[RMDB]
RNA sequence: GGGAACGACUCGAGUAGAGUCGAAAAGGGAGAAGUGGAAGUGUGCCUGCCAUUCAAAAGAUUUUGGAUCACUGGCGUCCAGCGGAGAAACAGGAGCUCGUCUCCUUCCUUUCGCUGCUGGCUCCACCCAUCUCUACAGGUUCGCCUGUAGAGAUGGAAAAGAAACAACAACAACAAC
Reactivity to 2A3 in 0.01 (KOAc 150mM, MgCl2 10mM, bicine 150mM(pH8.5), 24C), signal-to-noise 2, nucleotides 027 to 126: g050g000g030a110g020a130a040g030u040g020g050a050a050g050u040g050u090g130c000c030u040g010c040c010a010u010u040c020a020a030a070a150g300a190u060u050u070u120g030g000a000u060c030a040c080u020g010g010c000g050u060c000c000a010g000c010g020g030a020g000a030a050a080c300a200g020g000a000g010c050u140c270g220u140c110u030c000c100u010u020c000c010u040u020u000c020g020c030u010g000c000u020g000g010c000u040c010c000a020c000
Reactivity to DMS in 0.01 (KOAc 150mM, MgCl2 10mM, bicine 150mM(pH8.5), 24C), signal-to-noise 1, nucleotides 027 to 126: g010g000g000a060g030a090a100g020u000g010g000a060a040g020u020g010u010g010c020c010u000g000c080c150a030u000u000c030a030a050a070a210g000a190u010u000u010u000g010g010a070u010c100a120c120u000g010g010c020g010u020c010c000a000g020c010g010g000a060g000a000a020a000c180a000g000g010a030g030c040u000c300g000u000c010u000c000c000u000u010c020c020u010u000u000c010g020c030u000g030c020u000g000g000c130u010c010c000a060c140

Structure probing data (2A3 and DMS) for a 177-nucleotide construct. High 2A3 reactivity points to a flexible backbone, as in loops and unpaired stretches.